Source: RMDB library RFM100, as collected in RNAgym. An RNA of 177 nucleotides, treated with 2A3 and DMS and read out base by base. For 2A3, 704 sequencing reads were counted. The DMS profile rests on 1,180 reads.
[RMDB]
RNA sequence: GGGAACGACUCGAGUAGAGUCGAAAAAGUAGGCUGUUUUUAAUAGUACUAACUUAAUCCACUGAUGGCUAUAGGAAAGCAUUGUGUAAUCCCCGAACACCUCUGUGGUGUAUUGGAUUCAUGACAUAUAUAUCGCACGGUUCGCCGUGCGAUAUAUAAAAGAAACAACAACAACAAC
Reactivity to 2A3 in 0.01 (KOAc 150mM, MgCl2 10mM, bicine 150mM(pH8.5), 24C), signal-to-noise 2, nucleotides 027 to 126: a010g030u030a000g000g030c000u000g160u090u030u150u200u260a120a080u100a020g050u020a250c010u130a170a000c000u000u010a080a000u000c000c000a070c010u030g010a020u050g050g060c010u100a030u210a270g200g070a140a000a070g080c030a040u000u080g020u000g000u070a000a130u070c010c000c000c110g010a020a000c000a010c000c010u080c010u100g250u270g170g000u020g030u030a250u020u000g020g040a030u010u010c080a030u130g000a000c230a000u000
Reactivity to DMS in 0.01 (KOAc 150mM, MgCl2 10mM, bicine 150mM(pH8.5), 24C), signal-to-noise 1, nucleotides 027 to 126: a000g020u000a000g010g000c000u000g000u010u000u050u010u000a060a000u040a070g010u000a290c030u000a030a070c060u000u020a070a150u000c070c010a050c030u080g000a040u000g000g010c000u010a060u000a130g000g000a130a100a170g020c050a060u030u020g080u000g000u000a000a040u000c030c000c030c170g020a110a040c040a080c000c000u040c140u080g000u040g000g020u020g020u000a070u000u010g000g010a040u000u000c000a020u000g000a100c250a140u000